[RMDB]
Chemical mapping of a 177-nucleotide RNA with DMS and 2A3. For DMS, 3,197 sequencing reads were counted. Values cover nucleotides 27 to 126. The 2A3 profile rests on 2,647 reads.
RNA sequence: GGGAACGACUCGAGUAGAGUCGAAAAGUGCCGAUUGAAAUUCAUGGGAGCCUCUCCAUAAUGGAUGAACGCCGCGAUAGUUCGCGCAGUCGCGACGUAAACGCUCUGUCUUCCCGUUCAGGCCUCACGACUAUGACUAGUUCGCUAGUCAUAGUCGAAAAGAAACAACAACAACAAC
Reactivity to DMS in 0.01 (KOAc 150mM, MgCl2 10mM, bicine 150mM(pH8.5), 24C), signal-to-noise 3, nucleotides 027 to 126: g020u000g000c040c000g000a170u000u000g000a090a120a090u000u000c080a060u000g000g020g000a050g000c080c060u000c050u000c010c010a140u010a090a080u000g010g000a040u020g000a110a010c030g010c000c000g020c010g000a020u000a090g040u000u000c200g020c200g010c040a260g010u000c010g020c020g010a010c000g010u000a040a060a080c220g010c020u000c010u010g000u010c080u000u010c000c020c010g030u010u000c080a120g000g000c020c070u010c100a150
Reactivity to 2A3 in 0.01 (KOAc 150mM, MgCl2 10mM, bicine 150mM(pH8.5), 24C), signal-to-noise 3, nucleotides 027 to 126: g070u050g050c030c000g090a080u060u190g040a160a150a080u200u130c050a050u120g020g000g000a020g010c050c020u110c000u030c010c000a070u230a300a040u240g020g010a010u100g000a020a010c010g010c000c000g000c000g010a000u010a050g090u080u140c060g020c020g000c110a030g030u010c000g000c010g010a010c000g020u010a050a080a000c040g010c020u000c010u030g120u020c040u030u010c000c010c020g010u080u050c050a040g080g010c000c030u050c000a110